[RMDB]
RNA sequence: GGGAACGACUCGAGUAGAGUCGAAAAACUUGAUGACUCAAACAAUAACAGUGAACCAAUCUGUUCCUAAAAGUUUGCAUUUAAUUGGUUCAAACUAUUUGGAAAUAUAGGAAAUGAGCACUUGAUGCGAGGAUAGGGUCUUCGGACCCUAUCCUCGAAAAGAAACAACAACAACAAC
Reactivity to 2A3 in 0.01 (KOAc 150mM, MgCl2 10mM, bicine 150mM(pH8.5), 24C), signal-to-noise 1, nucleotides 027 to 126: a000c030u070u110g080a070u070g050a070c000u000c000a000a060a300c000a030a070u070a110a040c000a000g000u000g170a070a120c030c000a000a000u130c040u010g020u000u000c000c000u090a080a080a130a000g000u000u000u010g030c100a030u210u190u070a010a230u150u250g140g080u120u110c000a000a000a000c010u010a090u000u030u140g050g050a040a130a040u210a000u030a020g180g000a030a040a000u010g000a030g000c000a000c070u060u140g000a010u180g000
Record summary: This 177-nucleotide RNA was probed chemically with 2A3. The RNA was probed in 150 mM KOAc, 10 mM MgCl2 and 150 mM bicine (pH 8.5) at 24 C.